[RMDB]
RNA sequence: GGGAACGACUCGAGUAGAGUCGAAAAGCCACGCUUCGGCGUGGCAAACGGUCUGGGAAUACAUAAGUAUUCCCGGAGGAUCUAUAGGAUGGUCGGGCCGCCAUCUAAAUCCGCGGUUCGCCGCGGAGACUAGGAUGUGGUUCGCCACAUCCUAGUCAAAAGAAACAACAACAACAAC
Reactivity to DMS in 0.01 (KOAc 150mM, MgCl2 10mM, bicine 150mM(pH8.5), 24C), signal-to-noise 1, nucleotides 027 to 126: g020c020c000a000c020g000c010u000u000c180g020g010c000g020u010g000g000c000a000a030a100c120g040g020u000c000u000g010g000g000a020a000u000a000c000a170u020a170a140g000u000a000u000u000c000c000c000g010g020a050g000g010a130u000c060u000a100u000a130g000g000a060u000g000g000u000c050g010g000g000c000c010g000c030c010a060u000c010u000a060a070a260u000c000c000g010c000g010g030u000u000c150g000c030c010g030c020g000g010a020
Reactivity to 2A3 in 0.01 (KOAc 150mM, MgCl2 10mM, bicine 150mM(pH8.5), 24C), signal-to-noise 1, nucleotides 027 to 126: g000c010c000a000c000g010c000u000u110c240g120g000c010g000u040g000g010c010a000a010a000c050g030g070u000c000u030g000g010g020a020a000u000a000c030a110u300a300a150g030u000a000u000u000c000c000c000g000g000a000g010g000a020u020c030u110a190u150a090g020g060a030u020g000g020u040c010g010g050g000c020c010g030c030c020a020u000c010u030a110a070a000u000c010c010g000c020g000g030u040u060c220g060c080c000g000c000g020g010a020
An RNA of 177 nucleotides, treated with DMS and 2A3 and read out base by base. Reactivities are given for positions 27 through 126. The RNA was probed in 150 mM KOAc, 10 mM MgCl2 and 150 mM bicine (pH 8.5) at 24 C. The data come from the RNA Mapping Database (RMDB), library RFMREP.